RNA sequence: GGGAACGACUCGAGUAGAGUCGAAAAACUUGGCGUUCCACAGAUAUGUCAAGCGCAUGCAGCGGCAGCCGGACCAGUGCAUCAGAUGCGCGCAUGGCGGCUCGCUGCUGUGGCCCAAGGAGCAGCCGUGAAUGUCGACGUUCGCGUCGACAUUCACAAAAGAAACAACAACAACAAC
Reactivity to 2A3 in 0.01 (KOAc 150mM, MgCl2 10mM, bicine 150mM(pH8.5), 24C), signal-to-noise 1, nucleotides 027 to 126: a000c030u020u010g000g010c020g090u100u000c010c020a080c120a020g130a050u230a020u160g040u030c060a020a090g000c050g000c060a040u300g010c000a010g000c020g000g040c000a000g000c000c040g050g000a100c010c030a100g000u010g080c000a030u060c130a090g300a300u120g040c040g000c000g000c060a070u030g020g020c000g030g020c080u090c030g000c000u020g000c000u000g000u000g020g050c010c000c010a030a110g010g010a050g040c130a080g080c050c000
Reactivity to DMS in 0.01 (KOAc 150mM, MgCl2 10mM, bicine 150mM(pH8.5), 24C), signal-to-noise 1, nucleotides 027 to 126: a100c000u000u010g010g000c040g020u000u000c030c070a100c210a120g030a140u000a060u000g000u020c040a090a170g000c000g020c020a010u000g020c030a010g010c000g020g020c000a060g000c000c000g030g010a060c300c030a090g020u000g000c000a040u000c180a060g020a300u020g000c040g010c000g050c030a060u000g010g000c010g000g000c000u010c140g040c000u000g030c000u000g050u000g000g000c000c000c020a080a030g020g000a000g030c200a110g030c080c080